[RMDB]
RNA sequence: GGGAACGACUCGAGUAGAGUCGAAAAACAUGUACUCAAUGGGCGACUGCUGUCAGACAUCUUUGCACAGUUGGUGGUCCCGUUAGGCUCAGUUGCCCUAAAACACCAUCCCAUGACGACUUGUCUGAUUCUUAUCCUAAUUGGAUGGCUGGCAUUGACACUUUAGGUCAUUCGUGACCUAAAGUGUAAAAGAAACAACAACAACAAC
Reactivity to DMS in 0.01 (KOAc 150mM, MgCl2 10mM, bicine 150mM(pH8.5), 24C), signal-to-noise 2, nucleotides 027 to 156: a050c060a100u000g010u000a100c050u020c050a130a150u000g000g010g010c010g020a050c030u000g030c070u010g020u000c020a100g000a140c060a040u010c060u000u000u000g040c100a080c050a110g010u000u000g060g040u000g010g000u000c020c000c050g020u010u000a040g030g020c050u000c040a100g010u000u000g000c050c010c010u020a060a070a060a110c030a020c040c020a050u000c020c000c020a060u010g010a080c090g010a100c030u000u000g000u000c030u000g010a100u000u000c070u000u010a120u000c040c040u000a110a090u000u000g000g000a030u000g020g030c030u000g000g030c080a130u000u000g000
Reactivity to 2A3 in 0.01 (KOAc 150mM, MgCl2 10mM, bicine 150mM(pH8.5), 24C), signal-to-noise 5, nucleotides 027 to 156: a000c080a070u110g030u170a100c030u060c170a060a140u110g000g000g010c020g020a010c010u010g080c040u040g060u040c020a020g030a090c030a120u040c060u050u150u170g090c090a050c020a150g090u110u120g070g000u050g010g050u080c000c040c000g030u050u090a040g020g000c000u010c060a020g000u020u050g010c040c010c000u060a080a070a010a010c030a000c000c020a030u020c000c000c020a040u100g050a030c100g050a070c060u120u120g020u020c030u040g060a130u210u060c030u080u150a100u060c010c010u080a160a110u100u070g030g010a020u010g020g000c050u000g050g020c020a090u100u140g020
Annotation
Chemical mapping of a 207-nucleotide RNA with DMS and 2A3. Values are in units of 0.01, from 0 to 300, in steps of 10. The reactions ran in a buffer of 150 mM KOAc, 10 mM MgCl2 and 150 mM bicine (pH 8.5), at 24 C. Source: RMDB library OK3TST, as collected in RNAgym. For 2A3, 2,907 sequencing reads were counted. For 2A3 the reverse transcriptase was SuperScript II with manganese.